Chemical mapping of a 177-nucleotide RNA with 2A3 and DMS. For DMS, 657 sequencing reads were counted. Conditions: 150 mM KOAc, 10 mM MgCl2 and 150 mM bicine (pH 8.5), 24 C.

RNA sequence: GGGAACGACUCGAGUAGAGUCGAAAAUAGGUCGUGUUCGCACGACCUAAGAUAAAAUGCAUAAAAUGCCAGUAACCCGAAACACAAGCGAGUGCACCUGGCCUACGAUGUCGUUCGCGACAUCGAACGCACAGUCUGAGUUCGCUCAGACUGUGCGAAAAGAAACAACAACAACAAC
Reactivity to 2A3 in 0.01 (KOAc 150mM, MgCl2 10mM, bicine 150mM(pH8.5), 24C), signal-to-noise 1, nucleotides 027 to 126: u050a000g000g030u000c000g000u000g030u090u020c230g000c080a000c000g000a000c000c000u000a020a010g000a000u040a010a130a020a030u090g020c020a000u150a210a200a080a030u090g000c000c000a000g000u040a050a040c030c010c000g000a060a110a000c080a010c050a130a020g160c060g090a030g060u020g000c010a010c020c010u020g000g010c000c020u030a090c020g020a000u010g020u010c000g010u010u060c170g030c010g080a000c000a010u000c000g020a060a030
Reactivity to DMS in 0.01 (KOAc 150mM, MgCl2 10mM, bicine 150mM(pH8.5), 24C), signal-to-noise 1, nucleotides 027 to 126: u000a030g020g060u020c020g090u000g050u000u010c300g030c000a010c000g000a000c000c010u010a000a040g000a070u000a060a060a060a080u010g010c030a050u000a040a040a100a110u020g000c000c060a030g000u030a140a150c030c010c010g010a100a070a090c160a020c180a040a130g000c110g010a050g020u000g000c040a070c210c010u000g000g000c000c260u010a070c000g040a000u000g000u000c010g000u010u000c100g020c000g030a000c000a000u000c000g000a070a120